Chemical mapping of a 207-nucleotide RNA with 2A3 and DMS. For DMS the reverse transcriptase was MarathonRT. Reactivities are given for positions 27 through 156. The DMS profile rests on 6,696 reads.
RNA sequence: GGGAACGACUCGAGUAGAGUCGAAAAUCUAUCUCAUACAUAAGCUCAUACCAAGAUUGGUCUGGGUUUGGAUUAUCAAUAAGCAUCUGCAAUGGUGAGUUAGGAACAUGCUCAAGAGUGCCGUCUGAUUUUUUACGCUUAGCCUGCCAUGGUACAGUGAGUAUGAUGAUUUCGAUCAUCAUACUCAAAAAGAAACAACAACAACAAC
Reactivity to 2A3 in 0.01 (KOAc 150mM, MgCl2 10mM, bicine 150mM(pH8.5), 24C), signal-to-noise 6, nucleotides 027 to 156: u040c000u010a050u020c030u020c040a070u120a210c020a020u130a080a010g010c000u000c010a010u010a020c010c000a060a070g080a300u110u180g040g000u010c030u010g000g000g000u020u010u070g020g000a030u070u070a080u190c110a060a090u140a170a020g040c010a030u030c020u140g010c050a040a100u060g010g010u030g000a040g010u030u050a030g000g030a070a050c050a090u100g010c010u050c040a070a070g060a010g080u030g020c010c020g050u030c040u020g130a160u030u020u010u020u100u260a040c030g010c030u040u050a020g020c000c010u030g020c040c030a090u080g030g000u060a040c010a060g080
Reactivity to DMS in 0.01 (KOAc 150mM, MgCl2 10mM, bicine 150mM(pH8.5), 24C), signal-to-noise 3, nucleotides 027 to 156: u000c070u000a130u000c010u020c040a170u000a200c050a130u010a100a080g050c000u010c020a050u000a070c020c000a090a210g020a210u000u000g020g000u000c050u010g020g020g030u000u000u000g030g010a110u000u000a270u000c050a070a090u000a090a100g010c030a050u000c020u000g020c050a100a130u000g000g020u000g000a090g020u010u010a050g010g000a050a060c040a090u000g000c040u000c050a070a110g010a100g010u000g020c010c040g000u000c080u010g010a020u000u030u000u000u000u010a070c080g010c040u000u000a110g000c030c030u000g000c010c020a090u010g000g040u020a080c090a140g000

Conditions: 150 mM KOAc, 10 mM MgCl2 and 150 mM bicine (pH 8.5), 24 C.